[RMDB]
RNA sequence: GGGAACGACUCGAGUAGAGUCGAAAAAGUUCGUAGCCGAAGUAAUGGCUGACCCACGGUUCAACAGCUUCCUGCGUCCUACGCUUGAGGGCGAUGACUGUAUGGGCAUCAUCGGGACACGACCUCAGCUAUUGUCCCUCUUCGGAGGGACAAUAGCAAAAGAAACAACAACAACAAC
Reactivity to 2A3 in 0.01 (KOAc 150mM, MgCl2 10mM, bicine 150mM(pH8.5), 24C), signal-to-noise 4, nucleotides 027 to 126: a030g080u070u050c010g000u000a030g000c030c020g050a050a000g040u270a070a120u090g040g050c090u030g190a300c000c000c010a000c040g030g010u140u150c040a060a060c070a190g010c060u140u090c000c000u000g040c000g020u090c030c080u150a070c040g000c020u050u050g080a250g000g110g000c010g010a010u090g010a010c000u000g040u210a180u080g030g000g050c030a060u020c000a000u060c010g000g000g060a020c030a000c040g080a060c000c020u040c010a000
Reactivity to DMS in 0.01 (KOAc 150mM, MgCl2 10mM, bicine 150mM(pH8.5), 24C), signal-to-noise 2, nucleotides 027 to 126: a090g000u010u000c080g130u050a040g000c000c020g000a020a070g000u030a270a120u000g000g010c220u000g000a120c070c010c030a030c160g020g020u020u000c070a000a120c220a240g000c020u010u000c010c000u000g000c050g000u060c100c240u050a030c020g030c120u080u000g000a070g000g000g000c030g000a010u000g020a170c020u000g110u020a030u050g000g020g000c130a030u090c010a000u000c060g020g020g000a200c050a060c020g000a180c090c020u000c120a130